RNA sequence: GGGAACGACUCGAGUAGAGUCGAAAACUAUGUACAGACAGUACAGUGGAUAAGGUCUCUAGAUAUCCAACUUGAACAAUGGUACUUGCAGUGGUAUCUAUCAAGAUAGGCAGGCUAUCAUAGAAAGAAGAUGUGUAUGGUUCGUUGUACGCAUCUUAAAAGAAACAACAACAACAAC
Reactivity to 2A3 in 0.01 (KOAc 150mM, MgCl2 10mM, bicine 150mM(pH8.5), 24C), signal-to-noise 8, nucleotides 027 to 126: c020u030a040u080g010u000a010c030a100g190a030c020a030g060u010a010c000a030g040u050g100g020a090u060a170a060g100g070u030c020u000c000u020a030g010a070u040a020u030c010c010a020a040c030u010u040g010a070a010c040a070a090u120g020g000u030a020c000u010u070g060c040a050g030u070g070g020u020a010u000c010u000a080u030c020a030a010g020a050u040a020g040g040c050a020g010g000c020u010a000u020c010a050u030a040g100a020a110a010g090
Reactivity to DMS in 0.01 (KOAc 150mM, MgCl2 10mM, bicine 150mM(pH8.5), 24C), signal-to-noise 9, nucleotides 027 to 126: c030u010a060u010g010u000a010c010a150g010a130c210a150g010u000a010c010a040g020u010g000g010a090u010a060a100g010g010u010c030u000c040u010a060g010a090u020a020u010c010c070a060a120c030u000u000g000a060a050c130a060a040u010g000g000u000a020c010u000u000g010c080a110g020u030g020g020u000a010u000c000u000a080u040c170a060a030g000a050u010a030g010g000c050a040g000g000c170u000a010u000c010a040u000a040g010a070a040a060g010